RNA sequence: GGGAACGACUCGAGUAGAGUCGAAAAUGGCUAACCUGUACUCCUUGUGGGUGCAGGCGAACCAGGACUUUUACUUUGAAAAAAUUAGAGUGUUCAAAGCAGGCGAAAGCUCGAAUAUAUUAGCAUGGAAUAAUGGAAUAGGACGUUUGGUUCUAUUGAUGAAGUUAAUCUUCGGAUUAACUUCAUCAAAAGAAACAACAACAACAAC
Reactivity to 2A3 in 0.01 (KOAc 150mM, MgCl2 10mM, bicine 150mM(pH8.5), 24C), signal-to-noise 2, nucleotides 027 to 156: u030g000g000c050u030a020a010c000c000u000g000u020a000c000u040c020c040u140u300g070u300g050g010g010u000g000c010a000g000g000c000g000a000a000c000c000a000g000g040a000c000u020u060u050u100a020c010u090u050u080g040a090a040a000a040a020a060u140u270a140g020a010g080u050g010u010u080c010a050a120a030g050c060a040g060g040c080g030a050a040a000g020c020u030c060g010a040a010u030a010u020a000u000u070a030g010c020a020u020g010g030a050a080u070a060a050u080g060g000a020a050u050a050g020g030a040c070g040u060u040u030g020g030u020u020c000u030a050u000u030

An RNA of 207 nucleotides, treated with 2A3 and read out base by base. The reactions ran in a buffer of 150 mM KOAc, 10 mM MgCl2 and 150 mM bicine (pH 8.5), at 24 C.